Background: Structure probing data (2A3) for a 207-nucleotide construct. For 2A3 the reverse transcriptase was SuperScript II with manganese. Conditions: 150 mM KOAc, 10 mM MgCl2 and 150 mM bicine (pH 8.5), 24 C. For 2A3, 385 sequencing reads were counted. It was measured as part of the RMDB library OK3TST.
RNA sequence: GGGAACGACUCGAGUAGAGUCGAAAACAAAUCGUCUUCAAGUUUCUGGCAUAUCUCGUCCUGAGAUAAAUUAAGACCAAACGAAAGAAGCAAACAAGAGAAUCAUCAAGUUUGCAUCAGGAUCAUAAGAACUAAUAGAAUUAGGCAAAACUUAUAACCCGAUAAAUGCUUUCGAGCAUUUAUCGGGAAAAGAAACAACAACAACAAC
Reactivity to 2A3 in 0.01 (KOAc 150mM, MgCl2 10mM, bicine 150mM(pH8.5), 24C), signal-to-noise 1, nucleotides 027 to 156: c010a000a060a090u090c000g030u000c010u250u180c050a110a010g000u000u190u220c180u090g000g010c000a010u000a010u030c000u000c040g180u130c060c150u150g000a030g000a000u010a000a060a040u180u050a050a000g030a030c000c040a000a110a000c010g060a040a010a180g040a090a000g000c000a000a000a000c030a110a020g160a000g040a230a180u120c130a040u010c010a050a050g000u040u010u000g000c000a000u030c000a000g030g000a050u100c000a010u070a070a060g090a080a000c000u000a050a060u120a010g180a080a010u130u020a000g030g000c010a000a070a110a020c250u300u300a030u300a300a040